[RMDB]
RNA sequence: GGGAACGACUCGAGUAGAGUCGAAAACAGAGAUGCCACAGAUGUAGAGACAGAGCUGAGAAGAGCCAGUUGUGGCAAGAGGCCAUGGGCCGGAUAAGGGGGCUGUGCUCCAGCCUGACUCAGGCACUGAUUAGUGAUGUUUCGACAUCACUAAUCAAAAAGAAACAACAACAACAAC
Reactivity to 2A3 in 0.01 (KOAc 150mM, MgCl2 10mM, bicine 150mM(pH8.5), 24C), signal-to-noise 5, nucleotides 027 to 126: c020a000g090a010g020a110u080g020c010c010a050c040a050g160a140u200g100u270a070g020a000g020a080c020a010g070a030g040c010u040g030a030g030a300a050g010a030g020c010c010a020g030u090u070g050u100g040g000c010a020a030g090a010g060g000c000c030a080u110g070g170g020c070c020g010g020a130u160a180a120g060g000g010g010g000c010u050g100u190g020c000u010c010c000a010g000c010c000u010g000a020c010u000c040a020g010g030c020a000c060
Reactivity to DMS in 0.01 (KOAc 150mM, MgCl2 10mM, bicine 150mM(pH8.5), 24C), signal-to-noise 8, nucleotides 027 to 126: c050a120g010a140g000a140u010g020c010c010a090c100a090g010a120u010g010u010a090g010a080g010a100c040a030g000a120g020c020u000g010a160g010a140a180g000a060g010c020c010a060g000u000u000g020u000g010g000c020a080a080g000a130g000g010c010c020a080u010g030g010g030c010c010g000g000a120u010a070a150g010g010g000g010g010c010u000g000u010g020c030u000c020c010a040g000c020c000u000g010a100c040u000c010a080g010g010c050a060c160